[RMDB]
RNA sequence: GGGAACGACUCGAGUAGAGUCGAAAAAGCUGCCGAGGCGCUGCUGGAGCACCUGGACCACGCGGACAAUUCAGGCAACGCCUACAGCGAUGACAACGCCCUCGCAGCCCUGCUCGACGCCCUCGGCCUCUCUGUACCUCUUCGGAGGUACAGAGAGAAAAGAAACAACAACAACAAC
Reactivity to 2A3 in 0.01 (KOAc 150mM, MgCl2 10mM, bicine 150mM(pH8.5), 24C), signal-to-noise 1, nucleotides 027 to 126: a010g000c010u010g040c050c060g010a020g010g030c080g010c060u140g030c010u050g030g000a040g010c030a000c040c010u010g010g000a030c010c000a080c160g140c180g000g080a060c080a090a110u050u060c000a030g010g040c020a110a130c090g030c000c000u050a090c050a020g000c040g060a120u250g040a040c050a100a090c070g010c030c000c000u000c070g040c000a010g000c000c000c000u020g020c020u000c020g000a020c010g020c000c010c000u000c050g000g000c000
Reactivity to DMS in 0.01 (KOAc 150mM, MgCl2 10mM, bicine 150mM(pH8.5), 24C), signal-to-noise 1, nucleotides 027 to 126: a060g000c010u000g020c060c060g000a020g020g030c030g000c040u010g020c010u000g000g000a050g000c040a120c050c000u000g000g010a040c060c060a130c090g020c120g000g020a020c160a170a200u000u000c040a070g000g010c100a070a040c130g000c030c010u000a100c120a010g000c010g010a120u020g000a070c060a100a060c080g000c090c030c020u000c000g070c020a050g020c030c060c020u020g010c060u030c000g010a100c070g000c020c000c000u010c020g020g030c080

This 177-nucleotide RNA was probed chemically with 2A3 and DMS.
Reactivities are given for positions 27 through 126.